Chemical mapping of a 207-nucleotide RNA with 2A3. 2A3 adducts were read by reverse transcription with SuperScript II with manganese. The RNA was probed in 150 mM KOAc, 10 mM MgCl2 and 150 mM bicine (pH 8.5) at 24 C. As a SHAPE reagent, 2A3 marks flexible, mostly unpaired nucleotides at the ribose 2'-OH. The data come from the RNA Mapping Database (RMDB), library RSTRND.

RNA sequence: GGGAACGACUCGAGUAGAGUCGAAAAGACUCAAAAAAUAAUAAGUGCAAACAACAUUGUACCUUUUGCUCGUAAGCAAGUAGCUGCUCUAGCUUAAUUGCAAAAACACCUCUUAUAGGUUCGAGCGUCUGUGGUUUGACUCCGUUAAUAAUUGCAGGAGAGAUAAGCAGUUCGCUGCUUAUCUCUCAAAAGAAACAACAACAACAAC
Reactivity to 2A3 in 0.01 (KOAc 150mM, MgCl2 10mM, bicine 150mM(pH8.5), 24C), signal-to-noise 1, nucleotides 027 to 156: g030a000c010u030c050a040a100a040a100a000a000u190a170a000u090a160a130g030u010g050c030a040a030a050c020a030a100c030a110u060u080g010u080a040c020c000u070u050u120u200g010c000u020c000g020u010a040a040g000c020a000a010g040u040a000g030c040u060g050c040u020c040u160a020g000c000u060u080a130a040u050u020g000c000a000a000a020a040a040c030a010c040c010u060c090u130u160a160u220a300g000g000u020u040c000g000a020g010c000g000u000c000u030g070u040g030g000u000u050u080g000a020c040u000c100c010g020u050u010a060a030u040a130a050u200u090g050c030a020g010